[RMDB]
RNA sequence: GGGAACGACUCGAGUAGAGUCGAAAAUGGUCCGGUCAGCGACGCGCCCGAAAGUCUCUGCGAAGUUCCUUCGCGCCGCAUCUGAUGCCGUAUCCUGCGUCGCCAGUGUCGAACUCUCGGGCACGGCCCAUAUAGUAGUCUUCGGACUACUAUAUGGAAAAGAAACAACAACAACAAC
Reactivity to DMS in 0.01 (KOAc 150mM, MgCl2 10mM, bicine 150mM(pH8.5), 24C), signal-to-noise 9, nucleotides 027 to 126: u020g010g010u010c020c030g000g000u010c060a090g010c040g010a040c020g010c040g000c020c010c020g010a050a060a060g000u010c070u010c060u030g010c010g000a050a060g010u030u010c100c030u000u000c030g010c020g010c130c060g000c060a050u020c040u000g010a070u020g010c030c020g000u010a090u010c050c040u000g000c020g010u010c010g010c010c040a050g010u010g010u010c050g000a080a070c030u000c030u000c010g010g000g010c030a070c020g000g000c060
Reactivity to 2A3 in 0.01 (KOAc 150mM, MgCl2 10mM, bicine 150mM(pH8.5), 24C), signal-to-noise 9, nucleotides 027 to 126: u140g030g010u040c020c010g020g040u080c040a020g020c010g070a060c010g030c020g010c010c010c000g020a050a050a010g050u030c030u040c050u200g040c030g040a060a020g080u160u120c030c010u040u030c020g000c010g020c030c020g020c020a070u070c060u100g040a070u090g030c020c010g030u050a090u070c020c030u050g010c010g030u030c010g000c010c010a050g010u030g050u090c020g010a040a030c010u010c010u010c040g000g010g000c020a010c010g040g010c000

Overview:
Structure probing data (DMS and 2A3) for a 177-nucleotide construct. The 2A3 profile rests on 119,196 reads. For DMS, 96,344 sequencing reads were counted. The reactions ran in a buffer of 150 mM KOAc, 10 mM MgCl2 and 150 mM bicine (pH 8.5), at 24 C. It was measured as part of the RMDB library OK1LIB. Reactivities are given for positions 27 through 126. 2A3 adducts were read by reverse transcription with SuperScript II with manganese.